[RMDB]
Overview:
This 177-nucleotide RNA was probed chemically with DMS. Reactivities are given for positions 27 through 126. It was measured as part of the RMDB library OK2TST.
RNA sequence: GGGAACGACUCGAGUAGAGUCGAAAACUGGUGCUGGGGUUGGUAAAUCGUCGCUCCUAGGAAUGAUCGCUAGAAACGCUGAAGAAGCAGAUGUCAAUGUGAUUGCUCUCAUAGGAGAGCGGGGCCGUACGAAGUAUCGCUUCGGCGAUACUUCGUAAAAAGAAACAACAACAACAAC
Reactivity to DMS in 0.01 (KOAc 150mM, MgCl2 10mM, bicine 150mM(pH8.5), 24C), signal-to-noise 1, nucleotides 027 to 126: c050u010g020g030u000g040c030u000g000g020g000g020u000u040g000g000u010a050a110a090u020c030g010u000c100g040c020u000c000c010u010a080g000g000a060a040u000g000a000u010c040g010c030u000a150g040a050a050a100c150g010c030u000g000a120a090g000a200a030g030c010a060g010a160u000g010u000c030a150a100u000g010u000g020a050u000u000g010c040u000c010u000c050a210u000a060g010g000a040g000a140g020c020g010g010g000g000c120c130g000